[RMDB]
RNA sequence: GGGAACGACUCGAGUAGAGUCGAAAAAGCUCAGUCUACGGACUGAGCACGGGAUGAUGAACCUCCAUCCCAACUGAAUAAAUGAUGAAUGCACAUCAGGCUGACAAGCGCGAUUACGAUCGCGCAAUCCUACCAAUAAUUUCGAUUAUUGGUAGGAAAAAGAAACAACAACAACAAC
Reactivity to 2A3 in 0.01 (KOAc 150mM, MgCl2 10mM, bicine 150mM(pH8.5), 24C), signal-to-noise 9, nucleotides 027 to 126: a000g010c000u000c000a000g000u000c000u020a060c280g100g000a000c010u000g000a000g000c000a000c010g000g000g000a010u020g000a020u090g070a060a080c010c010u030c020c000a000u000c010c000c000a020a050c070u110g100a080a090u130a170a090a080u080g050a020u030g060a150a120u250g060c090a030c010a120u020c010a030g100g040c060u110g050a060c050a170a090g000c010g000c000g000a000u040u060a060c240g050a020u000c000g000c000g000c000a000a010
Reactivity to DMS in 0.01 (KOAc 150mM, MgCl2 10mM, bicine 150mM(pH8.5), 24C), signal-to-noise 8, nucleotides 027 to 126: a070g010c010u000c000a020g000u010c000u000a160c170g020g010a020c000u000g000a000g020c010a010c140g010g010g000a010u000g000a100u010g010a120a120c030c000u010c220c010a010u000c000c010c000a130a100c170u020g010a120a070u020a050a110a080u000g010a030u010g000a150a090u010g000c150a070c040a030u000c030a020g010g000c090u010g020a090c210a080a110g000c010g000c000g000a010u000u010a100c170g010a070u000c000g000c000g000c000a030a020